[RMDB]
Description
Source: RMDB library OK1LIB, as collected in RNAgym. Structure probing data (2A3) for a 177-nucleotide construct. 2A3 adducts were read by reverse transcription with SuperScript II with manganese.
RNA sequence: GGGAACGACUCGAGUAGAGUCGAAAAUUUAGCUUCAGAUACAUUCGACGCGUCCAACAUCAAUCCAACCGCAUUACAUUACGAAUCGACUCACCAUGGCGUCGCAUUCUGCGGACACACAGCAGACCCGCCUCUUCAGUUUCGACUGAAGAGGCGGAAAAGAAACAACAACAACAAC
Reactivity to 2A3 in 0.01 (KOAc 150mM, MgCl2 10mM, bicine 150mM(pH8.5), 24C), signal-to-noise 1, nucleotides 027 to 126: u150u150u130a000g000c030u090u080c020a000g050a130u110a080c030a080u020u000c090g040a010c000g010c040g000u080c000c000a040a090c020a070u160c040a000a060u050c070c020a000a130c050c000g100c000a000u060u060a050c000a130u000u170a140c060g030a120a090u040c040g130a050c000u030c000a090c020c010a070u140g050g060c060g000u040c020g020c000a040u060u000c000u000g010c080g040g000a000c010a020c000a000c050a040g060c000a000g000a050c000